The record gives the reactivity of an RNA of 177 nucleotides to DMS. For DMS the reverse transcriptase was MarathonRT. Reactivities are given for positions 27 through 126. The reactions ran in a buffer of 150 mM KOAc, 10 mM MgCl2 and 150 mM bicine (pH 8.5), at 24 C. Source: RMDB library OK2TRN, as collected in RNAgym.
[RMDB]
RNA sequence: GGGAACGACUCGAGUAGAGUCGAAAAAAGAUGGAUCAAUAGUUGUCAAUUUUGGACCAGGGCUAAAUGCACACAGUUUUUGAUUCACCCUGUUUCUGAUAACCCCUUUAUUGGUACUCUAAAGGCCAACAUAAACCUCCUUCGGGAGGUUUAUGUUAAAAGAAACAACAACAACAAC
Reactivity to DMS in 0.01 (KOAc 150mM, MgCl2 10mM, bicine 150mM(pH8.5), 24C), signal-to-noise 1, nucleotides 027 to 126: a030a040g020a130u010g000g010a000u000c000a040a000u000a060g020u000u000g000u010c040a060a100u000u000u000u010g000g000a050c100c110a090g000g000g000c040u010a020a040a060u010g010c180a060c250a050c030a130g010u000u000u020u020u010g000a090u010u000c040a070c000c010c050u000g010u000u000u010c000u010g000a090u000a090a120c090c110c000c040u000u000u000a030u010u000g000g000u010a030c050u010c190u020a020a050a130g000g000c120c050